Overview:
The record gives the reactivity of an RNA of 177 nucleotides to DMS and 2A3. The RNA was probed in 150 mM KOAc, 10 mM MgCl2 and 150 mM bicine (pH 8.5) at 24 C.
RNA sequence: GGGAACGACUCGAGUAGAGUCGAAAAGAUGUGCUGACGAUUCGCUUUGGUCAAAAAUUAGUAACAGUUAAAGUAACUGCAUUAAAUGAACAUGCAUCUAAAGAUAACGCGAAGGGCAUGUAUGAAAACAAUCCCUCUGGUUCGCCAGAGGGAUUGUAAAAGAAACAACAACAACAAC
Reactivity to DMS in 0.01 (KOAc 150mM, MgCl2 10mM, bicine 150mM(pH8.5), 24C), signal-to-noise 2, nucleotides 027 to 126: g000a090u020g000u010g000c000u000g000a240c060g040a080u000u010c030g010c090u000u020u010g010g030u000c020a030a070a070a080a090u030u000a050g020u000a160a240c050a000g000u000u020a080a150a130g000u040a000a030c030u000g000c130a050u000u010a100a030a060u010g020a040a060c080a000u000g030c040a060u030c000u020a030a080a090g040a130u010a080a120c210g030c050g000a110a050g010g010g030c000a000u010g010u000a070u060g030a040a040a070
Reactivity to 2A3 in 0.01 (KOAc 150mM, MgCl2 10mM, bicine 150mM(pH8.5), 24C), signal-to-noise 2, nucleotides 027 to 126: g090a110u100g010u090g120c030u030g020a070c070g090a210u000u000c040g000c000u060u080u180g050g000u000c000a000a000a000a000a250u070u240a100g080u090a120a070c000a000g000u010u070a050a290a000g110u090a120a060c010u070g000c020a070u170u170a220a210a160u140g020a030a050c020a060u070g000c000a000u010c020u100a120a000a050g060a170u100a140a000c060g010c030g130a110a000g010g000g000c020a020u020g040u050a140u090g120a070a160a000
For DMS, 2,674 sequencing reads were counted. Values cover nucleotides 27 to 126.